[RMDB]
RNA sequence: GGGAACGACUCGAGUAGAGUCGAAAAACGUCUGAGUACGUGAACAUGUCGAGUAAGUGAUCGAUGAACACGACGUUCAAAUCGUGCUGUAACCGUCCAUCCUACCACGGUCGCGAUGUCAUCGUAUGACCGAUCACCAAUAAUUACACAUCGUGGACAUACGGAAGAGGUUCGCCUCUUCCGUAUGAAAAGAAACAACAACAACAAC
Reactivity to 2A3 in 0.01 (KOAc 150mM, MgCl2 10mM, bicine 150mM(pH8.5), 24C), signal-to-noise 9, nucleotides 027 to 156: a000c030g020u030c080u190g090a030g070u140a010c020g020u030g020a050a020c060a090u120g030u090c050g020a030g080u110a130a050g010u070g050a050u050c040g040a080u090g030a040a010c050a010c110g160a030c070g000u020u030c030a040a040a070u070c010g030u010g010c080u110g070u150a040a040c020c020g000u030c040c030a080u050c030c020u040a050c010c040a020c010g030g000u020c010g000c010g020a020u030g100u110c040a050u030c060g080u140a130u150g020a010c000c010g010a040u030c010a010c040c020a040a060u180a120a050u180u190a040c040a010c010a090u140c080g100u050g030g010a020
Reactivity to DMS in 0.01 (KOAc 150mM, MgCl2 10mM, bicine 150mM(pH8.5), 24C), signal-to-noise 4, nucleotides 027 to 156: a020c030g030u000c010u000g030a190g050u000a040c010g030u000g000a060a080c080a130u000g000u000c040g000a170g020u000a120a110g020u000g010a050u010c030g020a050u000g030a120a040c040a060c010g030a020c010g040u000u000c190a060a080a050u000c000g050u000g040c100u010g010u000a080a100c030c020g020u010c050c040a140u000c090c080u000a080c070c050a040c000g010g040u000c020g000c010g000a050u000g020u000c060a110u000c050g050u000a180u000g020a080c010c020g020a030u000c000a010c020c010a040a140u000a060a100u010u000a080c050a080c050a090u000c050g030u010g000g010a250
Structure probing data (2A3 and DMS) for a 207-nucleotide construct. Conditions: 150 mM KOAc, 10 mM MgCl2 and 150 mM bicine (pH 8.5), 24 C. It was measured as part of the RMDB library OK3TST. The DMS profile rests on 8,932 reads.